[RMDB]
RNA sequence: GGGAACGACUCGAGUAGAGUCGAAAAUCGAGGAGUGGAAGGCGGGUAGGGGGGACCCCAGGGUCAACCUACGGAAAUCCCUGAGUUCCUCGGAUGUCCAGGCCGUCCCCUCUUCUAGAGAAGGGAGGCUGUUUACUAUGUUCGCAUAGUAAACAGCAAAAGAAACAACAACAACAAC
Reactivity to DMS in 0.01 (KOAc 150mM, MgCl2 10mM, bicine 150mM(pH8.5), 24C), signal-to-noise 2, nucleotides 027 to 126: u000c110g010a040g050g000a010g030u010g020g000a040a030g020g020c120g030g040g000u000a090g020g030g030g020g020g000a010c030c020c040c110a070g010g000g000u000c100a050a110c050c010u020a070c180g000g000a070a080a160u030c030c010c000u000g010a230g000u000u000c010c010u000c070g030g030a120u000g000u010c010c010a040g000g000c020c020g010u000c000c000c030c000u000c000u000u000c060u010a090g000a070g000a010a060g000g000g010a170g010